Structure probing data (DMS) for a 177-nucleotide construct. Values cover nucleotides 27 to 126. It was measured as part of the RMDB library OK2TST. The reactions ran in a buffer of 150 mM KOAc, 10 mM MgCl2 and 150 mM bicine (pH 8.5), at 24 C. The DMS profile rests on 916 reads.
RNA sequence: GGGAACGACUCGAGUAGAGUCGAAAAGUUAAUUUCUAUUGAGCAAACCUCACCUCAUGGGAUCUUCUAUCACUAUUUUGUGACUAUAGUGUUCUGGUUAUCAGGUGGACAUAGAAUUGUCUUAACGUAAUGCCUAGACGUUCGCGUCUAGGCAUUAAAAAGAAACAACAACAACAAC
Reactivity to DMS in 0.01 (KOAc 150mM, MgCl2 10mM, bicine 150mM(pH8.5), 24C), signal-to-noise 1, nucleotides 027 to 126: g000u000u000a030a060u000u010u020c000u010a110u000u000g010a090g010c070a110a100a080c120c030u020c000a050c070c000u010c050a060u000g030g020g050a020u000c070u000u000c120u010a150u020c020a020c000u000a050u000u000u000u010g010u010g000a100c180u000a080u000a010g000u010g030u000u000c030u010g010g050u000u000a050u010c050a060g030g010u000g010g010a070c110a090u000a060g000a050a090u010u000g020u000c070u000u000a040a160c270g010